Chemical mapping of a 177-nucleotide RNA with 2A3 and DMS. The DMS profile rests on 15,641 reads. 2A3 adducts were read by reverse transcription with SuperScript II with manganese. DMS (dimethyl sulfate) methylates the pairing face of unpaired adenines and cytosines.
[RMDB]
RNA sequence: GGGAACGACUCGAGUAGAGUCGAAAAACGGAUAGAUUCGUCUAUCCGUGCAUCUCAUAACAGACAGAGAAAGUCUGCUAACAUCUCACUUAGAUAAAGAGAAGAGAGUCGAGUUCGCUCGACUCAAGACUUGUAAUAUAUUCGUAUAUUACAAGUCAAAAGAAACAACAACAACAAC
Reactivity to 2A3 in 0.01 (KOAc 150mM, MgCl2 10mM, bicine 150mM(pH8.5), 24C), signal-to-noise 9, nucleotides 027 to 126: a000c000g010g000a000u010a000g010a010u020u050c160g030u000c110u000a000u000c000c000g000u000g000c010a070u000c010u000c020a040u080a110a040c000a010g040a020c000a000g210a010g130a300a150a020g030u000c000u010g030c020u060a080a040c020a180u020c020u000c030a070c060u090u160a050g040a210u160a240a170a010g040a010g010a100a040g090a020g000a000g030u000c000g000a000g010u030u040c170g030c050u010c000g000a000c000u010c000a000a000
Reactivity to DMS in 0.01 (KOAc 150mM, MgCl2 10mM, bicine 150mM(pH8.5), 24C), signal-to-noise 9, nucleotides 027 to 126: a020c000g000g000a010u000a000g010a020u000u010c200g010u000c000u000a000u000c000c000g020u000g000c150a150u000c000u000c020a090u010a050a070c000a010g010a010c000a070g010a190g010a110a170a080g000u000c000u000g010c050u000a030a070c140a060u000c010u000c050a100c130u000u000a070g000a110u010a070a080a070g000a030g010a080a120g010a160g000a010g010u000c000g010a020g010u000u010c210g010c000u000c000g010a010c000u000c010a030a070